[RMDB]
RNA sequence: GGGAACGACUCGAGUAGAGUCGAAAAGGCGGCGCCGGUCGUGGGAUGGGAUUUCUCCUGGCUAGAAGGCCGAACGACAGAAGAACGACCGUCGUGGGGGUACCAGCGGCUGAUGAGCCAGCGAUUGAUCCAGGUAAAUCUUCGGAUUUACCUGGAUAAAAGAAACAACAACAACAAC
Reactivity to DMS in 0.01 (KOAc 150mM, MgCl2 10mM, bicine 150mM(pH8.5), 24C), signal-to-noise 5, nucleotides 027 to 126: g020g020c020g000g000c050g000c030c010g010g020u010c030g010u010g000g010g010a090u000g020g000g000a130u010u020u020c030u000c030c010u010g000g030c000u000a040g000a080a240g000g010c000c010g010a170a040c040g000a030c080a110g010a160a130g020a090a160c090g010a110c040c010g020u020c000g000u000g000g000g010g020g000u040a100c080c040a140g010c030g000g010c020u010g020a130u180g000a090g000c010c000a050g010c140g000a140u030u010g000
Reactivity to 2A3 in 0.01 (KOAc 150mM, MgCl2 10mM, bicine 150mM(pH8.5), 24C), signal-to-noise 4, nucleotides 027 to 126: g030g020c020g000g020c030g000c040c000g010g040u040c030g030u010g020g030g010a100u110g050g000g050a040u050u140u010c050u030c000c000u020g000g000c000u020a050g050a180a070g100g000c000c000g010a050a020c000g070a020c030a040g080a110a000g040a160a040c080g070a070c080c000g040u060c000g010u070g020g010g000g010g030u080a120c030c020a020g010c010g020g000c000u040g010a140u070g000a070g000c020c010a040g010c050g040a020u040u110g050

The data come from the RNA Mapping Database (RMDB), library OK1LIB. This 177-nucleotide RNA was probed chemically with DMS and 2A3. For 2A3 the reverse transcriptase was SuperScript II with manganese. Values cover nucleotides 27 to 126. The DMS profile rests on 9,693 reads.